[RMDB]
RNA sequence: GGGAACGACUCGAGUAGAGUCGAAAAAAUUGCGCGCAUGGGCAAAGCCGAUUGCAUCGCGCAAUUCAUCGCGGCUGAAAUUCAGCCCCGGAAAAUUACGCGCAUUGGUCUCAUCGCGAAAACCGCACACGGGAUACGGAUUCGUCCGUAUCCCGUGAAAAGAAACAACAACAACAAC
Reactivity to DMS in 0.01 (KOAc 150mM, MgCl2 10mM, bicine 150mM(pH8.5), 24C), signal-to-noise 1, nucleotides 027 to 126: a010a040u000u000g000c000g030c000g020c300a070u000g020g030g000c300a000a080a100g040c040c030g050a020u030u000g000c110a080u000c050g010c010g000c070a040a000u000u030c140a050u000c040g000c300g030g000c040u000g030a060a100a150u000u000c020a030g050c010c010c040c000g030g010a040a080a090a090u000u000a080c050g000c000g000c260a030u000u000g000g030u000c050u000c010a020u000c030g000c020g000a060a020a040a050c090c020g000c090a150

An RNA of 177 nucleotides, treated with DMS and read out base by base. The reactions ran in a buffer of 150 mM KOAc, 10 mM MgCl2 and 150 mM bicine (pH 8.5), at 24 C. For DMS the reverse transcriptase was MarathonRT. It was measured as part of the RMDB library OK2TST.